[RMDB]
RNA sequence: GGGAACGACUCGAGUAGAGUCGAAAAUUGGUCCCCGGUGUGAGCGCGCCGGGUGGGCUUCCGCUCUCCGGCCUGCUGCGCGGCGUGGGUGACGAACCGGAGUUGACGGACUUCGACGAACGGGGACUCGAGCGUGAUUUUUCGAAAUCACGCUCGAAAAAGAAACAACAACAACAAC
Reactivity to DMS in 0.01 (KOAc 150mM, MgCl2 10mM, bicine 150mM(pH8.5), 24C), signal-to-noise 1, nucleotides 027 to 126: u020u040g000g000u010c000c000c000c060g000g010u020g030u000g010a060g120c010g040c300g000c000c010g000g000g040u000g020g000g010c010u010u060c300c120g000c040u020c000u010c000c030g000g000c000c020u000g020c030u000g020c090g020c020g000g010c020g070u020g020g010g000u040g000a070c050g000a160a110c100c000g040g000a030g000u000u070g000a130c190g000g040a080c040u000u000c040g000a030c130g000a170a200c000g010g000g010g120a020c000
Reactivity to 2A3 in 0.01 (KOAc 150mM, MgCl2 10mM, bicine 150mM(pH8.5), 24C), signal-to-noise 1, nucleotides 027 to 126: u060u030g020g000u060c000c000c000c010g070g000u060g000u020g200a070g070c010g000c000g040c040c020g100g000g000u210g040g010g020c040u300u040c040c160g070c010u030c020u000c000c000g020g000c020c000u000g000c000u030g030c110g020c000g020g000c000g050u070g020g060g030u130g000a060c130g000a060a030c010c000g000g020a070g150u060u280g050a080c070g040g030a020c070u020u070c010g080a050c040g010a060a040c100g000g000g000g020a000c000

This 177-nucleotide RNA was probed chemically with DMS and 2A3. High DMS reactivity at an A or C suggests that its Watson-Crick edge is free. The reactions ran in a buffer of 150 mM KOAc, 10 mM MgCl2 and 150 mM bicine (pH 8.5), at 24 C. Source: RMDB library OK1LIB, as collected in RNAgym.